RNA sequence: GGGAACGACUCGAGUAGAGUCGAAAAUCCUCGCUGGCGCCGGCUGGGCAACAUUCCGAGGGGACCGUCCCCUCGGUAAUGGCGAAUGGGACCCAGAAAUCUCUCUAGAUUCCGAUAGAGAAUCGAGCACUAGUAUAACGUUCGCGUUAUACUAGUGAAAAGAAACAACAACAACAAC
Reactivity to 2A3 in 0.01 (KOAc 150mM, MgCl2 10mM, bicine 150mM(pH8.5), 24C), signal-to-noise 4, nucleotides 027 to 126: u000c000c010u030c020g030c040u050g060g030c050g000c040c030g060g050c030u030g040g010g000c010a040a030c010a040u000u030c010c010g000a020g000g010g000g000a050c080c080g300u300c020c000c000c000u000c000g000g000u010a000a010u010g020g000c060g060a040a050u100g040g020g040a060c000c000c020a010g050a030a130a020u070c080u000c010u030c010u050a050g000a080u030u020c030c020g100a170u100a110g120a020g010a020a010u040c030g010a010g040
Reactivity to DMS in 0.01 (KOAc 150mM, MgCl2 10mM, bicine 150mM(pH8.5), 24C), signal-to-noise 5, nucleotides 027 to 126: u000c010c000u000c140g020c040u000g000g010c060g020c040c020g000g020c030u000g000g010g010c040a110a120c020a030u000u000c010c000g000a030g030g010g010g010a250c250c300g000u010c000c000c000c000u010c010g000g000u010a000a020u000g010g000c090g020a100a100u010g010g000g000a120c030c010c010a060g000a090a100a100u010c070u000c010u000c030u000a080g000a050u000u000c010c020g010a150u010a080g010a100g010a030a050u000c050g000a110g010